[RMDB]
RNA sequence: GGGAACGACUCGAGUAGAGUCGAAAAGAAAGGCAGCCAGUGCAGCCCACGCAGGGGCAUGCUUUUGCAUGCCCAGUCGAGCCCACGACUUAGGGCAGCUGCGGCACUGAGGGCAGCUGCCGAAAGAGCCAUAGUGCGUAUUCGUACGCACUAUGGCAAAAGAAACAACAACAACAAC
Reactivity to DMS in 0.01 (KOAc 150mM, MgCl2 10mM, bicine 150mM(pH8.5), 24C), signal-to-noise 2, nucleotides 027 to 126: g030a090a080a150g010g020c020a040g030c000c080a050g010u010g030c040a110g040c040c010c060a230c190g010c160a110g000g030g000g020c010a010u000g010c000u000u020u000u050g030c000a020u000g000c000c000c060a020g000u000c000g000a090g000c010c000c000a300c080g000a020c040u000u000a140g010g010g000c030a130g020c100u000g010c060g040g000c060a090c060u010g000a110g010g010g040c030a160g020c000u000g000c000c000g000a030a040a100g030a090
Reactivity to 2A3 in 0.01 (KOAc 150mM, MgCl2 10mM, bicine 150mM(pH8.5), 24C), signal-to-noise 1, nucleotides 027 to 126: g110a020a070a000g010g030c020a010g020c000c030a020g000u000g040c000a010g060c020c050c020a040c060g200c070a070g000g040g000g020c000a000u000g000c030u070u250u160u300g000c000a000u010g030c000c040c000a000g010u010c000g000a020g000c030c000c000a000c030g060a020c040u040u180a030g040g070g030c000a000g000c030u050g020c070g040g000c070a030c050u060g040a190g050g060g000c000a000g000c000u000g000c010c000g000a000a040a000g070a010
Structure probing data (DMS and 2A3) for a 177-nucleotide construct. Values cover nucleotides 27 to 126.